Background: Structure probing data (DMS and 2A3) for a 177-nucleotide construct. For DMS, 13,970 sequencing reads were counted. For 2A3, 8,491 sequencing reads were counted.
RNA sequence: GGGAACGACUCGAGUAGAGUCGAAAAGAAGCCUCUUGCAAGUCGCGGGAGGCUACAACCACCGUCUGAGGCGGUGCCUCGGCCGGGGGUGAGUCGCCCUGGGAGAUUGGGGGUGCCAAGCCGUGGGGCCCCUAGCUACCUUCGGGUAGUUAGGGGCAAAAGAAACAACAACAACAAC
Reactivity to DMS in 0.01 (KOAc 150mM, MgCl2 10mM, bicine 150mM(pH8.5), 24C), signal-to-noise 4, nucleotides 027 to 126: g010a160a040g010c000c010u000c010u000u010g010c010a100a130g020u050c230g010c010g030g010g000a020g010g000c000u010a000c030a100a060c000c000a090c000c000g010u000c000u000g000a020g010g000c000g010g000u080g020c000c000u010c020g000g010c020c010g010g000g000g000g010u000g000a190g020u010c050g000c010c010c020u000g000g010g010a110g000a120u020u010g010g000g010g010g010u000g030c050c050a080a150g000c030c020g030u020g000g020g010
Reactivity to 2A3 in 0.01 (KOAc 150mM, MgCl2 10mM, bicine 150mM(pH8.5), 24C), signal-to-noise 7, nucleotides 027 to 126: g110a040a010g000c000c000u000c010u010u000g010c040a130a150g210u270c080g090c010g010g000g000a010g000g000c000u010a000c010a010a010c010c010a020c000c010g010u000c020u030g020a020g020g040c160g180g190u210g010c000c000u010c000g020g010c010c000g000g000g000g010g000u040g030a040g040u050c030g030c010c000c010u040g060g050g010a130g040a090u080u160g030g000g000g000g010u040g030c020c020a050a020g010c020c020g040u070g000g020g040